[RMDB]
RNA sequence: GGGAACGACUCGAGUAGAGUCGAAAAACAGUCAGUACGCUGACUUAGGGAAACGGGAGCCGGGCUUGGGACAAGAGCCAUCCCAAGUCCAAGGCCAAGUAGGCUCUAGUGAUGGUACGCCAUCACAAAAACUGGUCUACCUUCGGGUAGACCAGAACCUAGUGGAUAGCUUCGGCUAUCCACUAGGAAAAGAAACAACAACAACAAC
Reactivity to 2A3 in 0.01 (KOAc 150mM, MgCl2 10mM, bicine 150mM(pH8.5), 24C), signal-to-noise 2, nucleotides 027 to 156: a000c030a000g010u000c010a010g010u100a020c130g010c090u000g010a010c000u010u040a090g020g070g040a060a120a080c130g080g070g060a090g030c000c040g000g010g020c010u000u010g000g010g000a010c020a080a030g000a010g010c000c000a010u010c000c000c000a000a000g000u000c000c010a060a030g030g000c040c020a090a030g060u140a100g070g000c000u000c020u010a040g010u000g000a000u010g000g040u040a050c190g010c060c000a000u000c000a010c000a000a090a000a000a000c000u000g000g000u000c000u000a000c000c010u020u120c180g100g000g000u000a010g000a000c000c000a000g000a000a000